[RMDB]
RNA sequence: GGGAACGACUCGAGUAGAGUCGAAAACUCUAUCCGCCGCGCGCGUUAGAAACUUGAGGAAGGCUGUCCCUAGUACGAGAGGACCGGGACGGACGAACCUCUGGUGUGCCAGUUGUUCCGCCAGGAGGAAUACUUUGUGGUUCGCCACAAAGUAUUCAAAAGAAACAACAACAACAAC
Reactivity to DMS in 0.01 (KOAc 150mM, MgCl2 10mM, bicine 150mM(pH8.5), 24C), signal-to-noise 2, nucleotides 027 to 126: c000u000c020u050a030u000c030c040g030c090c170g000c130g050c040g010c050g040u030u020a150g000a120a170a030c000u000u000g010a020g010g020a090a300g010g000c000u000g000u000c000c000c000u020a030g000u000a110c010g000a210g000a240g030g000a090c300c190g000g000g010a010c010g030g000a020c030g020a100a180c000c010u000c000u000g000g020u000g030u000g000c050c030a010g020u010u000g010u000u000c000c010g020c060c100a110g010g000a190g020
Reactivity to 2A3 in 0.01 (KOAc 150mM, MgCl2 10mM, bicine 150mM(pH8.5), 24C), signal-to-noise 1, nucleotides 027 to 126: c000u000c010u030a030u010c030c030g000c100c090g150c000g010c030g000c010g080u090u050a140g090a170a180a040c020u030u060g010a010g010g020a060a030g050g000c010u010g000u080c000c000c000u020a030g020u000a010c030g000a020g000a040g180g000a000c010c010g020g000g010a010c010g020g010a010c020g040a070a150c040c000u030c010u020g000g000u070g010u050g010c020c010a040g020u010u010g010u060u030c000c030g080c080c040a070g100g060a080g100